[RMDB]
This 177-nucleotide RNA was probed chemically with 2A3 and DMS. Values cover nucleotides 27 to 126. The RNA was probed in 150 mM KOAc, 10 mM MgCl2 and 150 mM bicine (pH 8.5) at 24 C. It was measured as part of the RMDB library OK1LIB. For DMS the reverse transcriptase was MarathonRT.
RNA sequence: GGGAACGACUCGAGUAGAGUCGAAAAUCGUUUGCUCUUAUUCGCCCUCAAAGAAGAGCGUCCUAGAUAUUAAGACUAUAUAUAUUUGUGGGUGUAUAGUGUUGUCGGGGUGCAGACAGAGGAGACGGGAUAAUAAAAAUUUCGAUUUUUAUUAUCCAAAAGAAACAACAACAACAAC
Reactivity to 2A3 in 0.01 (KOAc 150mM, MgCl2 10mM, bicine 150mM(pH8.5), 24C), signal-to-noise 6, nucleotides 027 to 126: u080c000g010u010u020u070g050c010u000c000u040u070a080u130u060c030g030c000c010c000u030c030a110a100a040g080a060a020g030a040g020c000g000u000c000c020u060a120g050a090u100a090u190u190a150a010g020a040c010u010a010u010a010u010a020u030a080u220u080u100g100u090g050g040g010u000g000u000a010u010a010g030u020g000u000u030g000u000c010g000g000g000g000u010g000c010a010g040a150c030a030g020a020g070g010a030g020a030c050g060
Reactivity to DMS in 0.01 (KOAc 150mM, MgCl2 10mM, bicine 150mM(pH8.5), 24C), signal-to-noise 3, nucleotides 027 to 126: u040c020g000u020u010u000g000c020u020c050u000u010a120u030u010c070g000c020c000c010u000c050a040a090a090g020a090a180g000a070g000c070g000u000c000c050u000a080g000a090u030a060u010u040a100a140g000a080c020u030a110u000a060u030a030u000a060u030u010u000g010u010g010g000g020u000g010u000a020u010a070g010u000g000u010u010g010u010c070g000g000g010g020u020g000c060a060g000a070c110a050g010a090g010g010a040g010a030c120g010